[RMDB]
Chemical mapping of a 177-nucleotide RNA with 2A3. 2A3 adducts were read by reverse transcription with SuperScript II with manganese. Source: RMDB library OK1LIB, as collected in RNAgym.

RNA sequence: GGGAACGACUCGAGUAGAGUCGAAAAGCGCUUCGUGAGCAGGUCGCCGCGCUCUCUGCGGUAGAACUGCAGCGUUCGAAGCUGGAGGCACAGCUUGCUGCAAGGGAUGCCGCACUUCGACAUUAUAAUGCGAGUCGCACUUCGGUGCGACUCGCAUAAAAGAAACAACAACAACAAC
Reactivity to 2A3 in 0.01 (KOAc 150mM, MgCl2 10mM, bicine 150mM(pH8.5), 24C), signal-to-noise 1, nucleotides 027 to 126: g000c010g000c050u090u040c100g130u100g160a000g050c000a080g100g000u060c000g010c000c000g050c000g000c000u070c000u120c080u050g000c000g000g000u020a000g000a050a110c000u000g000c000a000g000c000g060u090u240c160g020a060a010g000c010u000g000g080a180g100g070c060a070c000a160g000c000u180u180g020c030u040g020c050a180a300g000g020g000a020u020g030c000c020g000c060a080c020u090u170c010g020a070c060a060u020u230a130u060a300